This 177-nucleotide RNA was probed chemically with 2A3 and DMS. Reactivities are given for positions 27 through 126. For 2A3 the reverse transcriptase was SuperScript II with manganese. For 2A3, 1,856 sequencing reads were counted. The DMS profile rests on 1,649 reads.
RNA sequence: GGGAACGACUCGAGUAGAGUCGAAAACCUGAAAUGCCUACUCUGAUACUUCGACCGGCUUCGGCUGUAAUGGCUGGAGUCUGGAGCUCGAUAAAGUCGGCGGAAGUUUGUCGUAACAGCGUGGCAAAGCUCACUCUUCAUUCGUGAAGAGUGAGCUAAAAGAAACAACAACAACAAC
Reactivity to 2A3 in 0.01 (KOAc 150mM, MgCl2 10mM, bicine 150mM(pH8.5), 24C), signal-to-noise 2, nucleotides 027 to 126: c000c020u010g060a120a110a040u060g000c010c010u020a040c000u060c010u010g050a080u070a100c060u000u020c020g030a030c010c000g000g000c000u000u000c000g050g010c000u050g070u270a180a140u300g020g000c000u000g020g010a010g040u020c020u060g050g000a040g010c060u050c040g040a020u110a090a080a000g110u040c000g000g010c000g060g040a050a000g020u010u130u210g030u110c020g000u000a000a050c000a020g060c000g150u000g000g000c000a000a000
Reactivity to DMS in 0.01 (KOAc 150mM, MgCl2 10mM, bicine 150mM(pH8.5), 24C), signal-to-noise 1, nucleotides 027 to 126: c020c020u010g000a040a110a030u010g000c000c000u030a120c060u000c010u030g000a100u000a030c060u010u000c000g000a020c040c030g000g010c000u000u000c000g040g030c000u000g020u040a210a030u040g000g010c000u000g000g000a020g030u000c000u110g030g000a110g000c080u000c020g040a070u010a060a170a100g000u000c000g070g000c010g060g000a160a020g000u000u020u110g010u010c060g010u000a060a070c010a030g000c170g000u000g000g030c000a120a040